Structure probing data (DMS and 2A3) for a 177-nucleotide construct. Reactivities are rounded to 0.1 and cut off at 0 and 3. High DMS reactivity at an A or C suggests that its Watson-Crick edge is free. Reactivities are given for positions 27 through 126.
RNA sequence: GGGAACGACUCGAGUAGAGUCGAAAAGGCAUCUGCCAGGGGGACGGUAGCAGCUGCACCCACGUGACGGGCAACUAUCGCAAGGGGAAUGCCCACCUUGGUAAGCCACAGCGCGCCCUGGAGUCCACAAUUGACCGAGAUUCGUCUCGGUCAAUUGAAAAGAAACAACAACAACAAC
Reactivity to DMS in 0.01 (KOAc 150mM, MgCl2 10mM, bicine 150mM(pH8.5), 24C), signal-to-noise 3, nucleotides 027 to 126: g010g030c050a060u000c100u010g020c010c010a050g000g030g000g020g020a110c050g010g020u010a050g030c100a060g040c070u010g000c260a180c040c000c060a090c300g020u000g010a050c090g000g010g010c100a090a080c050u010a070u010c020g000c050a080a200g000g030g000g020a120a100u010g000c020c000c010a060c030c020u000u000g000g000u000a060a100g000c030c010a080c050a070g000c070g000c110g020c020c010c000u000g000g010a080g000u010c030c080a150
Reactivity to 2A3 in 0.01 (KOAc 150mM, MgCl2 10mM, bicine 150mM(pH8.5), 24C), signal-to-noise 2, nucleotides 027 to 126: g040g000c000a040u020c050u150g060c010c040a000g040g030g010g020g050a020c010g040g060u090a040g000c050a020g030c020u040g010c020a090c020c000c010a030c070g060u050g040a060c080g000g030g000c000a090a070c070u030a020u080c030g000c110a120a120g060g010g000g030a110a140u100g040c020c020c000a100c030c020u020u010g000g000u040a050a050g010c020c000a050c030a050g060c070g000c010g040c000c000c000u010g050g030a050g020u040c000c000a050